[RMDB]
RNA sequence: GGGAACGACUCGAGUAGAGUCGAAAAUGUCCACUGUCUCCUCAAACCAUCACUGGGACACUUGCUUCAUAGUCCUAACAGUAGUCUUUUGUCUAAUCUACCGUACUCUAGGAGUGGUGGUGAUGUGGGUCAUGGCACCUUUCGAGGUGCCAUGACCAAAAGAAACAACAACAACAAC
Reactivity to 2A3 in 0.01 (KOAc 150mM, MgCl2 10mM, bicine 150mM(pH8.5), 24C), signal-to-noise 3, nucleotides 027 to 126: u170g040u000c060c020a020c070u010g040u010c030u070c060c040u070c030a030a100a050c000c000a060u030c010a010c060u070g010g030g060a000c000a020c120u160u240g080c060u090u000c020a060u070a110g010u000c060c010u050a020a060c040a050g040u030a020g020u000c100u060u230u080u100g150u090c070u060a070a070u080c050u050a020c000c020g050u060a060c050u030c090u100a050g060g080a010g090u030g030g020u030g000g010u000g020a010u170g020u060g030